Overview:
Source: RMDB library OK3TST, as collected in RNAgym. Chemical mapping of a 207-nucleotide RNA with DMS and 2A3. The reactions ran in a buffer of 150 mM KOAc, 10 mM MgCl2 and 150 mM bicine (pH 8.5), at 24 C. For DMS the reverse transcriptase was MarathonRT. 2A3 adducts were read by reverse transcription with SuperScript II with manganese.
RNA sequence: GGGAACGACUCGAGUAGAGUCGAAAAUUUGGUUCAUGCCACAUCAUUGCAAAGGUAAAAAUUGGUGACUUCCCUGGGAUGUAUGGGAUGCAUUGAAGAAAAGGAUACUUUUACAAAGCUUCUUUCUAUAGCAGCUGUGCUAAAUGUUUGGCGAUGAGAUAGUAGUCAGUUUCGACUGACUACUAUCAAAAGAAACAACAACAACAAC
Reactivity to DMS in 0.01 (KOAc 150mM, MgCl2 10mM, bicine 150mM(pH8.5), 24C), signal-to-noise 2, nucleotides 027 to 156: u020u000u000g020g020u010u020c060a130u020g010c040c010a100c080a070u000c050a110u000u000g010c030a050a090a080g020g010u000a050a060a030a100a160u000u000g000g010u010g010a080c070u010u000c010c010c020u020g010g030g030a170u000g000u000a070u020g010g020g020a070u000g030c040a070u000u000g000a090a080g010a040a050a060a080g000g000a130u000a040c020u010u000u000u000a190c090a070a060a040g020c050u000u000c010u000u000u010c090u000a150u010a070g000c010a040g040c040u000g050u000g000c030u000a060a060a050u000g010u000u020u000g010g010c020g020a110u000g000a170
Reactivity to 2A3 in 0.01 (KOAc 150mM, MgCl2 10mM, bicine 150mM(pH8.5), 24C), signal-to-noise 6, nucleotides 027 to 156: u060u020u050g030g010u050u100c020a030u130g000c010c000a050c010a050u070c030a050u020u100g040c050a070a080a080g030g020u120a110a070a040a080a090u060u060g030g000u030g050a140c000u030u010c020c000c000u030g020g030g040a100u070g040u150a080u100g020g010g010a010u020g020c020a030u030u110g060a080a030g050a060a130a010a020g040g020a030u110a180c000u060u090u020u010a080c110a040a120a020g010c000u030u040c000u020u150u050c110u160a130u120a080g000c020a010g020c010u050g040u040g050c010u050a110a050a050u080g040u040u070u060g040g010c030g040a030u060g030a050